[RMDB]
RNA sequence: GGGAACGACUCGAGUAGAGUCGAAAACGACAACGACCGCGUUACCGUCAUCGUCGAACCAGAUCGGGGCUCGGGACGAGACGAACGGUCGUCCAGCUAAAACCGCCAAACGCCGGCUGGUAACGCGACCGCCCUCGGGCGGCGACGGGGACGGCGGCACACCCCAGGACUUCGGUCCUGGGGUGUGAAAAGAAACAACAACAACAAC
Reactivity to 2A3 in 0.01 (KOAc 150mM, MgCl2 10mM, bicine 150mM(pH8.5), 24C), signal-to-noise 1, nucleotides 027 to 156: c000g050a040c070a050a020c050g030a010c000c000g010c050g160u090u170a180c050c000g070u010c000a300u040c040g030u000c020g020a000a030c010c000a030g030a180u120c090g020g000g050g000c080u090c110g000g020g020a020c000g010a020g000a060c050g030a090a100c050g020g010u000c020g000u000c000c000a000g020c000u030a060a000a000a070c010c020g000c100c060a140a170a020c060g060c040c010g000g060c020u000g040g000u030a090a010c020g080c000g080a160c000c000g000c010c010c010u100c150g000g000g000c060g000g000c030g020a060c000g010g030g040g000a060c030g060g000c000g000g000